Structure probing data (2A3 and DMS) for a 177-nucleotide construct. The reactions ran in a buffer of 150 mM KOAc, 10 mM MgCl2 and 150 mM bicine (pH 8.5), at 24 C. 2A3 adducts were read by reverse transcription with SuperScript II with manganese. High 2A3 reactivity points to a flexible backbone, as in loops and unpaired stretches.
[RMDB]
RNA sequence: GGGAACGACUCGAGUAGAGUCGAAAACUAAAGCCUACCGUGUUCUUCAAAUAUCGCCGCGCAUCUAUGACGCCGCAAGUCGUACCUAUCUCCGAGGAUGUUAUCGGCAUCUUGGAAAUAGGAUCAGCAUUCCUCGACUAUUCGUAGUCGAGGAAUGAAAAGAAACAACAACAACAAC
Reactivity to 2A3 in 0.01 (KOAc 150mM, MgCl2 10mM, bicine 150mM(pH8.5), 24C), signal-to-noise 7, nucleotides 027 to 126: c040u080a080a030a020g020c000c010u050a060c030c050g070u050g060u110u020c010u070u080c060a070a110a090u250a070u100c070g010c040c020g000c000g000c040a040u000c070u120a130u170g040a030c010g010c040c000g030c050a030a030g050u070c070g030u070a090c010c000u010a010u000c010u000c000c000g050a040g120g040a040u010g020u060u090a240u230c060g080g010c010a000u000c000u010u040g020g010a010a010a020u010a010g010g000a040u070c030a010g060
Reactivity to DMS in 0.01 (KOAc 150mM, MgCl2 10mM, bicine 150mM(pH8.5), 24C), signal-to-noise 3, nucleotides 027 to 126: c040u010a070a100a120g000c030c010u010a050c050c040g030u030g010u010u000c010u000u000c030a050a100a110u020a070u050c080g010c080c010g020c070g050c030a040u010c100u030a120u050g000a100c030g020c020c050g030c110a100a170g010u000c000g020u010a130c000c000u020a020u000c020u010c010c030g010a020g010g000a010u020g020u000u010a090u060c270g000g010c010a000u000c000u000u000g000g000a010a030a010u020a010g010g000a080u010c130a090g010